The data come from the RNA Mapping Database (RMDB), library RNAMAK.
An RNA of 207 nucleotides, treated with 2A3 and read out base by base.
The RNA was probed in 150 mM KOAc, 10 mM MgCl2 and 150 mM bicine (pH 8.5) at 24 C.
[RMDB]
RNA sequence: GGGAACGACUCGAGUAGAGUCGAAAAGCGUACUACUUCGUUCGGGUACUUGUCAGUGAAGGACUUCCCAAAUAGGAAGUCCGUAGCUUGGAUUUAGUAUCUCUAGCGUGACGAAGUAUCGCAAACAAGUAGGUCGUGUUCGCACGACCUACUUGAACGCUUGACACAUGUUCGCAUGUGUCAAGCGAAAAGAAACAACAACAACAAC
Reactivity to 2A3 in 0.01 (KOAc 150mM, MgCl2 10mM, bicine 150mM(pH8.5), 24C), signal-to-noise 1, nucleotides 027 to 156: g020c000g040u120a180c040u000a010c000u010u000c000g030u000u000c050g010g000g000u050a020c010u000u000g000u010c020a020g000u020g300a280a020g000g000a030c030u000u050c080c000c000a180a290a100u290a100g030g000a000a000g000u000c000c000g000u020a000g000c000u040u110g090g000a000u300u120u180a000g010u000a010u030c040u000c070u140a040g140c050g210u190g020a000c000g080a000a020g000u000a000u280c000g020c020a010a010a010c000a010a010g020u000a000g000g010u000c000g010u000g040u150u040c300g070c080a000c010g000a000c000c000u000a000c000u000u000g000a000a000